[RMDB]
RNA sequence: GGGAACGACUCGAGUAGAGUCGAAAAGAUAUGGAGGGAGCUACCCACCCUGACUGGUCGGAAACGACCAGCAGGAGGUAGUCCCUCCUAAGUCAAACAAAAAGGGAUGUUCGCAUCCCUUUUUGAACUACAGUAUCCGGUUCGCCGGAUACUGUAGAAAAGAAACAACAACAACAAC
Reactivity to DMS in 0.01 (KOAc 150mM, MgCl2 10mM, bicine 150mM(pH8.5), 24C), signal-to-noise 2, nucleotides 027 to 126: g000a000u010a230u000g000g010a020g000g000g020a090g020c020u000a000c000c000c300a170c260c010c000u000g000a120c000u000g000g000u000c000g000g000a070a070a150c000g000a030c000c000a000g030c010a010g000g000a030g000g000u000a010g000u000c010c000c000u000c000c000u020a000a050g000u000c010a170a100a300c020a000a000a000a000a000g000g000g010a000u000g020u000u010c250g010c000a020u000c000c000c010u000u000u000u000u000g030a100a180
Chemical mapping of a 177-nucleotide RNA with DMS. DMS adducts were read by reverse transcription with MarathonRT. For DMS, 1,437 sequencing reads were counted. Source: RMDB library TTRDEL, as collected in RNAgym. The reactions ran in a buffer of 150 mM KOAc, 10 mM MgCl2 and 150 mM bicine (pH 8.5), at 24 C.